[RMDB]
RNA sequence: GGGAACGACUCGAGUAGAGUCGAAAAUGAAAGCUGUGUGAGCGAGGCGGGCGGAGGAUGAGGCCGUGCCCGGGCUCUGGCUGCUGCCGCCCGGGGACACGCCGUGCACCCUCGGGCUCCGGAAAAAACUCUAAUCGAAAUUCGUUUCGAUUAGAGUAAAAGAAACAACAACAACAAC
Reactivity to DMS in 0.01 (KOAc 150mM, MgCl2 10mM, bicine 150mM(pH8.5), 24C), signal-to-noise 5, nucleotides 027 to 126: u010g010a080a080a110g010c020u000g010u010g020u000g010a060g010c040g000a110g010g010c050g020g000g010c030g010g010a040g010g010a050u000g010a150g000g010c060c080g020u000g010c010c010c000g000g000g000c030u010c190u010g020g010c010u010g010c270u010g030c020c020g000c000c000c000g010g000g010g000a040c010a030c110g010c010c020g020u000g010c030a040c030c000c000u000c010g000g020g000c030u010c020c020g020g000a000a040a060a080a070
Reactivity to 2A3 in 0.01 (KOAc 150mM, MgCl2 10mM, bicine 150mM(pH8.5), 24C), signal-to-noise 3, nucleotides 027 to 126: u160g030a040a080a020g000c020u010g010u040g050u090g190a050g030c060g010a030g020g090c060g030g000g000c030g020g010a010g040g000a010u030g030a050g010g020c110c040g010u040g030c020c000c020g030g000g000c050u070c160u160g030g000c010u200g050c130u190g000c030c010g000c020c000c010g000g000g000g010a020c000a000c020g000c000c000g000u050g000c010a010c000c000c010u010c020g030g090g010c030u070c030c030g020g000a090a080a000a000a000